[RMDB]
RNA sequence: GGGAACGACUCGAGUAGAGUCGAAAAUGAGAUCGGCGCGUGCUUGCCAAUUCUUAUCAGAACAAGGUUAUGAGGUUAUCGAUGUCCAAGGUGGCAUGAUGUCCUUUGAAGAACUUUAAAAAUUUGCCAUCAUGCCCCUUUUCGAAGGGGCAUGAUGAAAAGAAACAACAACAACAAC
Reactivity to DMS in 0.01 (KOAc 150mM, MgCl2 10mM, bicine 150mM(pH8.5), 24C), signal-to-noise 2, nucleotides 027 to 126: u010g000a040g030a010u020c140g000g010c030g020c070g000u010g030c140u020u010g000c010c000a030a090u000u000c000u000u030a010u010c180a160g010a160a160c210a050a020g000g030u000u000a040u050g000a030g030g050u000u030a030u000c020g000a010u020g020u000c010c040a130a170g050g040u040g020g010c010a000u020g000a050u000g010u000c000c000u000u000u000g000a060a070g010a010a010c030u000u000u000a020a020a090a070a120u000u020u020g000c180
Reactivity to 2A3 in 0.01 (KOAc 150mM, MgCl2 10mM, bicine 150mM(pH8.5), 24C), signal-to-noise 3, nucleotides 027 to 126: u120g000a020g020a030u050c030g040g000c040g000c020g040u100g060c050u060u090g030c020c000a070a060u120u030c030u080u110a100u210c070a030g010a040a030c070a120a040g050g010u060u000a030u080g000a000g020g000u030u040a000u040c090g060a030u040g000u010c020c010a160a110g270g110u260g030g010c010a030u010g000a010u000g000u030c000c000u000u070u170g100a090a080g010a030a060c010u040u120u110a030a080a080a050a050u120u140u230g140c060